This 177-nucleotide RNA was probed chemically with DMS and 2A3. For 2A3, 4,163 sequencing reads were counted. DMS adducts were read by reverse transcription with MarathonRT. For 2A3 the reverse transcriptase was SuperScript II with manganese. It was measured as part of the RMDB library M2PK50. The RNA was probed in 150 mM KOAc, 10 mM MgCl2 and 150 mM bicine (pH 8.5) at 24 C.
RNA sequence: GGGAACGACUCGAGUAGAGUCGAAAACUUUGAACGUUCGCGUUCAAAGAAACCUCUAAGCAGAUUGGCGAGGACGACGGUGCGGAGCGCGUUUGCCAAUAAAAAGCGUAGGCUUCGGCCUACGCAACGAUGCUUUCAAGUUCGCUUGAAAGCAUCGAAAAGAAACAACAACAACAAC
Reactivity to DMS in 0.01 (KOAc 150mM, MgCl2 10mM, bicine 150mM(pH8.5), 24C), signal-to-noise 2, nucleotides 027 to 126: c000u000u000u000g000a000a000c010g010u000u020c200g030c010g030u020u010c000a020a000a030g000a070a070a120c060c010u000c120u000a120a160g000c110a080g010a050u000u000g010g030c030g020a080g010g000a070c040g010a070c040g000g040u000g010c050g000g000a070g000c080g020c030g020u020u000u010g020c020c030a100a050u000a030a080a080a120a070g000c000g010u010a000g000g020c000u000u020c180g010g000c000c010u000a000c000g030c000a010a000
Reactivity to 2A3 in 0.01 (KOAc 150mM, MgCl2 10mM, bicine 150mM(pH8.5), 24C), signal-to-noise 3, nucleotides 027 to 126: c010u000u000u010g010a020a010c000g020u050u040c260g020c000g090u000u000c010a000a000a000g000a050a020a000c010c020u030c080u150a110a100g050c040a050g060a300u050u050g020g020c030g050a060g070g060a040c020g010a020c020g050g060u180g070c090g070g080a060g050c060g000c020g020u000u010u060g060c010c010a020a030u120a080a100a020a020a010g020c010g000u000a000g010g000c000u030u030c200g050g000c000c000u000a000c010g000c000a000a000